[RMDB]
RNA sequence: GGGAACGACUCGAGUAGAGUCGAAAAGGUGCAUGCCUGUAGUUUGAGCUACUCAGGAGGCUGACCCAGGAGGAUAGUUUGAGCCCAGGACGUUGAGGCUGCAGUGAGCCAUGAUUCCACCACUGCACUCACGCGAGUAUUUCGAUACUCGCGUGAGAAAAGAAACAACAACAACAAC
Reactivity to DMS in 0.01 (KOAc 150mM, MgCl2 10mM, bicine 150mM(pH8.5), 24C), signal-to-noise 2, nucleotides 027 to 126: g010g000u000g010c120a090u010g000c030c020u000g010u010a040g030u000u000u000g010a080g010c060u000a030c040u010c030a090g010g020a070g010g020c050u000g000a120c060c050c010a060g000g000a070g010g000a100u000a040g020u000u000u000g020a070g000c030c020c020a050g000g010a070c130g000u000u000g000a120g010g010c090u000g010c020a040g010u000g000a090g000c030c050a090u000g000a140u000u000c060c050a200c090c040a020c030u000g010c030a170